[RMDB]
RNA sequence: GGGAACGACUCGAGUAGAGUCGAAAAGGUUGUGAGCCAUAGAGACUUGGCAAAGGGGGUCUUGAGAAAGGAAGUUUAGGCAGAGGGAUUGUAGCCAGAUAGAAUUUUAGAGAGGGAAGAGGAGAGAGUUUAUAUAUGCGUUCGCGUGUAUGUGAGCAAAAGAAACAACAACAACAAC
Reactivity to 2A3 in 0.01 (KOAc 150mM, MgCl2 10mM, bicine 150mM(pH8.5), 24C), signal-to-noise 7, nucleotides 027 to 126: g070g010u070u060g040u060g070a030g000c010c010a020u100a030g140a010g010a070c040u070u070g030g000c000a040a060a070g060g000g010g000g010u010c000u070u100g030a060g040a030a040a010g030g020a030a030g000u040u100u130a060g020g000c030a020g010a050g050g030g020a030u030u120g050u050a020g010c010c010a000g010a020u050a030g100a080a060u030u110u130u160a060g020a000g000a020g020g010g010a040a020g010a020g040g000a000g010a000g000a000
Reactivity to DMS in 0.01 (KOAc 150mM, MgCl2 10mM, bicine 150mM(pH8.5), 24C), signal-to-noise 9, nucleotides 027 to 126: g010g010u000u000g010u000g010a150g010c020c030a070u000a110g010a140g010a090c090u000u010g010g010c060a050a090a120g010g000g000g000g010u010c040u000u000g000a110g000a060a080a070g000g000a070a070g010u000u000u000a070g010g010c060a080g010a100g010g000g000a080u000u010g010u000a080g010c040c040a060g000a100u010a080g010a070a070u010u000u010u000a090g000a100g010a070g000g000g000a040a050g010a060g000g000a060g000a070g000a080